[RMDB]
RNA sequence: GGGAACGACUCGAGUAGAGUCGAAAACUAAAAGCAUUGUGGAGUCUUGCAUGAGCGGUUAUAAUGGUACCAUCUUUGCAUAUGGACAGACUGGCUCAGGGAAGACAUUUACUAUGAUGGGACCAUCCGAAUACGCAAACUUCGGUUUGCGUAUUCGAAAAGAAACAACAACAACAAC
Reactivity to DMS in 0.01 (KOAc 150mM, MgCl2 10mM, bicine 150mM(pH8.5), 24C), signal-to-noise 2, nucleotides 027 to 126: c060u000a080a080a090a180g030c020a030u000u010g020u000g020g020a070g000u000c010u000u000g010c010a110u000g000a020g010c050g000g000u010u010a080u030a140a100u000g020g020u020a140c000c000a010u000c070u000u040u020g010c150a300u000a030u000g000g010a140c050a080g020a060c000u010g010g000c010u000c000a010g010g000g000a060a030g010a030c000a070u000u000u010a010c020u000a030u010g020a070u000g000g000g000a130c040c060a140u020c130
Reactivity to 2A3 in 0.01 (KOAc 150mM, MgCl2 10mM, bicine 150mM(pH8.5), 24C), signal-to-noise 2, nucleotides 027 to 126: c010u040a090a050a000a000g040c010a010u030u080g010u010g030g030a000g010u020c010u050u110g030c020a040u020g030a010g000c020g040g050u090u050a200u100a210a270u210g120g000u090a270c000c000a010u020c030u100u300u300g030c030a100u060a010u140g000g000a000c010a020g020a020c020u080g290g000c000u010c030a010g000g000g070a020a010g010a000c010a030u020u030u000a000c000u020a010u050g010a040u010g030g050g050a040c000c000a020u050c020

About this RNA
The record gives the reactivity of an RNA of 177 nucleotides to DMS and 2A3. 2A3 adducts were read by reverse transcription with SuperScript II with manganese. Values cover nucleotides 27 to 126. The RNA was probed in 150 mM KOAc, 10 mM MgCl2 and 150 mM bicine (pH 8.5) at 24 C.